Chemical mapping of a 177-nucleotide RNA with 2A3 and DMS. For DMS the reverse transcriptase was MarathonRT. For DMS, 17,332 sequencing reads were counted.

RNA sequence: GGGAACGACUCGAGUAGAGUCGAAAAAGGCAGCUUCAUACAUUGCUACUAAAGGUGUGACGCCAAUACCUGAACCUAAGAAAAGUUGUGGUUCAGUCGUAUUCUCUAAUACGAAUCCACCUACAGGCCUGUACGAUAAAUUCGUUUAUCGUACAGGAAAAGAAACAACAACAACAAC
Reactivity to 2A3 in 0.01 (KOAc 150mM, MgCl2 10mM, bicine 150mM(pH8.5), 24C), signal-to-noise 9, nucleotides 027 to 126: a000g070g000c030a030g010c060u070u050c050a040u060a110c020a080u100u170g080c040u080a130c060u160a160a120a060g080g000u030g040u080g030a020c040g020c040c020a040a040u060a050c000c000u000g010a020a010c000c020u080a140a060g130a130a140a040a050g100u140u120g090u080g080g020u030u030c020a020g040u040c040g000u010a010u040u030c130u010c080u230a080a080u060a070c030g020a010a020u020c010c010a030c010c020u050a060c040a040g090g060
Reactivity to DMS in 0.01 (KOAc 150mM, MgCl2 10mM, bicine 150mM(pH8.5), 24C), signal-to-noise 8, nucleotides 027 to 126: a060g000g010c140a060g010c070u010u010c090a090u020a050c140a100u010u010g020c090u020a090c120u020a080a100a050g010g030u000g010u010g020a040c130g010c060c140a050a120u020a060c090c000u000g000a050a060c000c010u030a070a090g010a080a090a090a080g020u020u010g010u000g010g010u000u000c050a030g000u000c030g000u000a000u000u010c250u040c190u050a040a030u010a010c020g010a070a120u030c020c020a050c020c020u000a080c170a080g000g010